[RMDB]
RNA sequence: GGGAACGACUCGAGUAGAGUCGAAAAGCGUAUCGGGGCGCUGCAGGAUAUGUGCCCGAGCACACCUUUGCCUCGAAAGUUCUUGCUUUUGCACAAGGAGCAGAUUACCUGCAGCAGGAUGUCGUGCCAUAAUAAUUACCUUCGGGUAAUUAUUAUGAAAAGAAACAACAACAACAAC
Reactivity to 2A3 in 0.01 (KOAc 150mM, MgCl2 10mM, bicine 150mM(pH8.5), 24C), signal-to-noise 9, nucleotides 027 to 126: g060c040g030u100a070u080c010g000g000g010g020c050g000c010u010g010c010a000g010g020a060u040a080u270g050u040g020c020c050c020g010a040g000c020a030c000a010c020c000u070u080u140g010c010c020u020c010g020a030a020a010g040u090u070c060u110u150g020c000u040u040u050u110g030c040a030c020a100a070g070g010a060g050c030a020g030a100u050u140a100c000c000u010g000c000a000g000c000a010g070g040a080u090g030u100c040g020u040g050c010
Reactivity to DMS in 0.01 (KOAc 150mM, MgCl2 10mM, bicine 150mM(pH8.5), 24C), signal-to-noise 9, nucleotides 027 to 126: g010c080g010u010a060u010c010g000g010g010g010c090g020c020u000g000c020a010g000g010a160u020a050u000g010u010g010c000c090c120g000a080g010c030a040c120a100c090c030u000u010u010g010c020c060u010c040g000a030a050a070g010u010u020c070u010u030g000c020u000u000u000u010g010c140a060c090a090a080g010g020a140g010c040a080g000a090u010u010a120c020c010u000g000c010a020g020c010a170g000g000a080u020g000u000c030g010u010g000c070

An RNA of 177 nucleotides, treated with 2A3 and DMS and read out base by base. Reactivities are given for positions 27 through 126. For 2A3 the reverse transcriptase was SuperScript II with manganese. For 2A3, 46,824 sequencing reads were counted.